[RMDB]
RNA sequence: GGGAACGACUCGAGUAGAGUCGAAAAGAUAUGGACUACGGCCCGAUUUCAACAGCUAGCGUCGGAAACGACGCUAGACAUGAAAGAGGGUUAGUCCUAAGUCAAAAGACGGUCUUCGGACCGUCAACCCCAGUUAGAUCUUCGGAUCUAACUGGGGAAAAGAAACAACAACAACAAC
Reactivity to DMS in 0.01 (KOAc 150mM, MgCl2 10mM, bicine 150mM(pH8.5), 24C), signal-to-noise 1, nucleotides 027 to 126: g010a010u010a300u000g000g000a050c000u000a080c300g000g030c000c000c000g000a300u010u000u010c000a030a070c240a140g060c010u000a040g000c030g100u000c000g010g010a150a080a130c000g000a010c000g000c000u010a000g030a000c100a110u000g040a000a000a010g010a300g030g010g000u010u010a000g000u000c000c000u000a040a100g000u000c030a060a000a080a230g010a010c000g000g050u000c000u000u000c130g010g000a000c010c040g040u000c010a030a000
Conditions: 150 mM KOAc, 10 mM MgCl2 and 150 mM bicine (pH 8.5), 24 C. An RNA of 177 nucleotides, treated with DMS and read out base by base. DMS (dimethyl sulfate) methylates the pairing face of unpaired adenines and cytosines. Reactivities are given for positions 27 through 126.